RNA sequence: GGGAACGACUCGAGUAGAGUCGAAAAGAUAUGGAGAACUACUUCCGCCCUCGCACUCGGAAACGAGUGAACUACGAGUAACAAGAAGCUCCUAAGUCAAAGCUGGAAAUGUUCGCAUUUCCAGCAACCAAAUCGAACUGUUCGCAGUUCGAUUUGGAAAAGAAACAACAACAACAAC
Reactivity to DMS in 0.01 (KOAc 150mM, MgCl2 10mM, bicine 150mM(pH8.5), 24C), signal-to-noise 1, nucleotides 027 to 126: g010a020u010a300u000g000g010a010g000a130a140c000u000a260c030u000u000c010c030g020c300c170c000u000c000g000c000a020c000u000c020g000g020a060a090a300c000g000a020g000u000g020a030a030c050u020a300c030g000a020g000u000a170a090c110a170a120g000a050a070g000c010u000c000c000u000a030a080g000u000c000a170a060a120g000c000u000g000g000a000a030a040u000g020u000u020c200g000c000a020u000u000u000c000c000a000g060c010a000a040
Reactivity to 2A3 in 0.01 (KOAc 150mM, MgCl2 10mM, bicine 150mM(pH8.5), 24C), signal-to-noise 1, nucleotides 027 to 126: g000a030u090a060u240g030g010a030g020a140a050c030u140a040c010u270u000c040c010g060c050c050c010u000c000g040c000a000c010u030c000g020g050a030a140a070c020g010a030g010u000g010a030a000c040u110a050c040g020a000g030u070a130a140c060a130a050g050a000a020g010c020u000c000c010u050a200a020g040u120c030a130a100a070g010c010u010g000g010a010a000a020u040g020u060u160c230g000c250a010u010u010u020c000c000a030g010c020a000a000

Structure probing data (DMS and 2A3) for a 177-nucleotide construct. The data come from the RNA Mapping Database (RMDB), library TTRDEL.